[RMDB]
RNA sequence: GGGAACGACUCGAGUAGAGUCGAAAACAGAAGGAGCAGGAGUGGUGUAUACUGCUUGGUGAAUGCCCUAGGAGAGGUGGAAGUUUCCAGAUAGAGGGAACAAUUUAGUGAUAAGUAUAAGUAUUGCAUGAGCUCCAUUAAGAUUCUGAAGCCACGACUAUAAAUCGCCAUUCGUGGCGAUUUAUAGAAAAGAAACAACAACAACAAC
Reactivity to 2A3 in 0.01 (KOAc 150mM, MgCl2 10mM, bicine 150mM(pH8.5), 24C), signal-to-noise 2, nucleotides 027 to 156: c010a020g070a070a050g030g010a010g000c030a000g020g050a060g060u110g000g000u020g010u010a090u020a040c030u040g060c020u020u030g040g010u050g020a110a070u070g040c010c010c010u020a060g050g030a090g010a010g040g020u040g000g050a090a020g010u010u080u020c010c000a000g030a030u070a060g050a090g000g000g040a020a000c010a000a060u110u120u150a110g010u070g040a030u120a170a020g090u120a030u040a220a020g000u010a040u030u170g020c020a010u060g020a010g020c010u000c040c000a020u070u120a050a030g010a100u040u000c010u040g060a030a000g030c000c030a020c010g030a000
Reactivity to DMS in 0.01 (KOAc 150mM, MgCl2 10mM, bicine 150mM(pH8.5), 24C), signal-to-noise 2, nucleotides 027 to 156: c040a130g010a070a140g020g020a050g040c070a090g020g010a080g020u010g020g070u000g000u010a110u010a050c050u000g030c050u000u040g010g040u020g030a060a100u000g000c030c030c010u000a160g020g000a100g020a080g030g010u010g000g020a070a120g030u010u000u000c030c010a130g020a170u000a090g000a160g040g000g020a030a040c050a080a020u000u000u020a090g040u000g010a200u020a040a180g020u000a060u010a030a130g000u000a060u000u000g020c040a100u000g020a160g000c010u010c010c030a100u000u020a080a130g000a160u000u000c060u000g010a150a080g020c000c030a060c000g030a210
This 207-nucleotide RNA was probed chemically with 2A3 and DMS. The DMS profile rests on 3,189 reads.